[RMDB]
RNA sequence: GGGAACGACUCGAGUAGAGUCGAAAAACACCAAGGAACAACGUCUUUUCUUGGCCCGCGAUCAAUUUGGCAUCAAGCCGUUGUACUUUGCUACUACCGAAGCUGGCACCGUUUUCGCCUCGGAGAAACCAUCAGUAUGUUUCGACAUACUGAUGGUAAAAGAAACAACAACAACAAC
Reactivity to DMS in 0.01 (KOAc 150mM, MgCl2 10mM, bicine 150mM(pH8.5), 24C), signal-to-noise 8, nucleotides 027 to 126: a100c190a270c100c020a040a030g000g000a080a020c100a060a070c100g010u010c050u000u000u010u000c050u010u000g010g020c020c030c100g020c130g020a100u010c110a060a080u000u010u000g040g010c020a100u010c140a060a110g010c040c020g010u000u000g010u000a080c060u000u000u000g010c060u000a060c090u000a080c040c030g010a060a050g010c050u010g010g020c050a090c070c070g000u000u000u000u000c100g000c030c010u000c030g010g010a120g010a100a100
Reactivity to 2A3 in 0.01 (KOAc 150mM, MgCl2 10mM, bicine 150mM(pH8.5), 24C), signal-to-noise 8, nucleotides 027 to 126: a000c070a030c010c010a020a030g040g000a070a030c040a060a050c140g120u080c070u030u090u040u010c030u050u050g060g000c020c020c020g020c040g050a090u110c050a110a120u090u090u270g030g000c020a040u070c100a210a030g000c020c020g000u020u030g010u020a060c030u090u070u090g030c010u050a080c010u060a130c030c030g040a040a000g030c030u060g030g010c040a060c070c060g060u030u030u100u110c050g010c000c020u010c020g070g010a050g070a120a070